This 177-nucleotide RNA was probed chemically with 2A3 and DMS.

RNA sequence: GGGAACGACUCGAGUAGAGUCGAAAAGAUAUGGACGAUUGAAUGGCAACAGCGAGAGAUUCGGAAACGAAUCUUCGACAUGCCACAAUCGUCCUAAGUCAAAACUAGAGUGGUUCGCCACUCUAGACAUCUCACACAUCUUCGGAUGUGUGAGAUGAAAAGAAACAACAACAACAAC
Reactivity to 2A3 in 0.01 (KOAc 150mM, MgCl2 10mM, bicine 150mM(pH8.5), 24C), signal-to-noise 3, nucleotides 027 to 126: g010a010u030a000u030g000g010a000c020g010a020u000u090g100a300a300u120g010g090c220a300a060c140a300g040c040g020a090g000a010g000a190u010u000c000g000g030a010a000a000c010g000a000a000u010c070u010u000c000g010a000c070a230u300g000c000c000a010c010a000a000u010c000g000u000c000c000u010a000a000g000u000c000a010a000a110a140c000u000a000g000a010g010u020g080g060u060u110c300g060c090c000a000c000u030c000u000a000g000a020
Reactivity to DMS in 0.01 (KOAc 150mM, MgCl2 10mM, bicine 150mM(pH8.5), 24C), signal-to-noise 3, nucleotides 027 to 126: g010a020u000a090u000g000g010a030c000g010a020u010u000g010a260a170u010g020g020c000a090a090c290a140g020c000g000a030g000a070g020a010u000u000c000g020g000a020a010a020c000g030a020a000u000c000u010u010c010g000a030c060a300u000g000c000c000a070c010a010a020u000c010g030u000c000c000u000a000a040g020u020c000a110a100a090a200c010u000a000g000a040g040u000g000g000u010u010c300g010c000c010a000c000u000c000u000a010g000a110

Notes:
2A3 adducts were read by reverse transcription with SuperScript II with manganese. For DMS, 2,527 sequencing reads were counted.